Chemical mapping of a 207-nucleotide RNA with 2A3 and DMS. DMS adducts were read by reverse transcription with MarathonRT. 2A3 adducts were read by reverse transcription with SuperScript II with manganese.
RNA sequence: GGGAACGACUCGAGUAGAGUCGAAAAACAGUACGAUUAUGUAUACGACGAGGUUGUCAAAGGGGCGUACGUUUACAAUCGUGAAAACGGCAAUCUUAUCACAUACGACGACCCAAAGUCUGUCGCCGAUAAGACUAAGUACGUGCUCGAUCACGAGUGCUUACAAUGCUUUCGAGCAUUGUAAGCAAAAAGAAACAACAACAACAAC
Reactivity to 2A3 in 0.01 (KOAc 150mM, MgCl2 10mM, bicine 150mM(pH8.5), 24C), signal-to-noise 2, nucleotides 027 to 156: a000c050a000g050u050a040c020g020a050u090u050a050u300g030u010a070u000a030c010g000a000c010g020a060g090g050u150u120g160u180c100a070a140a040g040g030g010g000c010g000u020a020c000g010u040u070u030a090c060a020a060u020c010g010u000g040a000a000a000a120c000g000g000c030a000a080u010c020u000u000a030u030c000a040c040a140u160a090c010g000a000c020g000a000c050c090c030a070a000a000g010u000c070u070g010u000c020g020c050c020g000a000u000a010a000g000a030c020u020a000a140g040u160a210c100g060u020g010c000u010c020g040a110u050c030a030c290g000a040g040
Reactivity to DMS in 0.01 (KOAc 150mM, MgCl2 10mM, bicine 150mM(pH8.5), 24C), signal-to-noise 1, nucleotides 027 to 156: a130c020a080g010u000a040c040g020a090u000u000a130u000g050u000a050u000a120c040g000a030c000g000a140g020g000u010u020g000u020c020a050a120a120g000g030g030g040c010g040u010a030c070g010u000u000u000a040c140a130a170u010c010g030u010g000a040a040a060a080c030g020g010c040a060a040u010c000u000u000a040u000c020a090c160a200u010a060c000g000a020c050g000a040c000c090c150a240a040a100g060u000c060u020g000u010c060g030c030c140g000a120u000a000a020g010a010c040u020a110a130g060u010a030c050g000u000g000c020u000c040g000a270u020c070a010c010g000a130g000